Structure probing data (DMS and 2A3) for a 177-nucleotide construct. For 2A3 the reverse transcriptase was SuperScript II with manganese. For DMS the reverse transcriptase was MarathonRT.
RNA sequence: GGGAACGACUCGAGUAGAGUCGAAAAGCAGCACUAGCAUGUCUCUAGUGCUGCGAGUACUAUCGGAUCCGCUGAUCACGAUCAUCAUGGUACUGCUCGAUCAUGACAUGCUACUAGGUGAUCCUAGAUGUAUCUGCUGGUUCGCCAGCAGAUACAUAAAAGAAACAACAACAACAAC
Reactivity to DMS in 0.01 (KOAc 150mM, MgCl2 10mM, bicine 150mM(pH8.5), 24C), signal-to-noise 3, nucleotides 027 to 126: g020c000a010g010c000a000c000u000a000g020c160a070u000g000u000c020u000c000u000a000g010u000g010c000u000g020c000g000a030g020u000a040c020u010a020u000c230g060g010a010u000c010c100g040c080u000g010a130u010c140a160c110g010a030u010c050a090u010c100a030u010g010g000u000a010c010u000g020c030u000c010g010a080u000c180a030u000g010a020c000a000u000g000c160u000a180c040u000a020g000g010u000g010a110u000c000c020u000a040g010
Reactivity to 2A3 in 0.01 (KOAc 150mM, MgCl2 10mM, bicine 150mM(pH8.5), 24C), signal-to-noise 3, nucleotides 027 to 126: g000c000a000g000c000a000c000u000a020g020c070a140u060g030u000c040u010c000u150a010g000u000g010c000u000g010c000g010a000g000u010a020c010u010a030u070c060g070g000a010u040c070c110g050c230u200g020a060u130c070a030c210g010a010u020c030a060u060c010a050u130g040g000u020a010c010u010g030c030u040c030g090a140u110c040a060u120g000a000c000a010u040g080c030u060a050c000u010a020g030g000u060g170a090u080c000c000u000a010g020

Annotation: The data come from the RNA Mapping Database (RMDB), library OK2TRN. The DMS profile rests on 3,640 reads. The reactions ran in a buffer of 150 mM KOAc, 10 mM MgCl2 and 150 mM bicine (pH 8.5), at 24 C.